[RMDB]
RNA sequence: GGGAACGACUCGAGUAGAGUCGAAAACGGAUUAGGCGUGGAGGCGAAAGUCACCCUCCUCGCAUCGCAAGUUCGUGCUUGCGACUUACACGUUGGGCGAGGGGUGGGCGAAAGUUGCCAUGAGACCAAAAUAUGUAGUUCUUCGGAACUACAUAAACCGUCUAUCAACUUUCGAGUUGAUAGACGGAAAAGAAACAACAACAACAAC
Reactivity to 2A3 in 0.01 (KOAc 150mM, MgCl2 10mM, bicine 150mM(pH8.5), 24C), signal-to-noise 3, nucleotides 027 to 156: c020g020g010a110u130u160a100g080g000c010g000u020g030g070a000g000g020c060g050a110a010a040g110u080c010a030c030c000c000u030c020c000u000c000g000c000a010u010c000g010c000a000a060g010u160u120c090g130u300g130c050u020u010g000c020g000a000c000u070u080a050c150a020c050g110u100u150g060g040g010c050g030a030g020g020g020g010u190g020g000g000c040g000a000a010a100g020u030u080g050c000c030a000u040g030a030g040a120c030c120a000a000a000a070u110a010u030g000u000a000g010u000u000c000u000u000c110g080g000a010a010c000u000a000c000a000u000a000a020a000
An RNA of 207 nucleotides, treated with 2A3 and read out base by base.
The reactions ran in a buffer of 150 mM KOAc, 10 mM MgCl2 and 150 mM bicine (pH 8.5), at 24 C.
For 2A3 the reverse transcriptase was SuperScript II with manganese.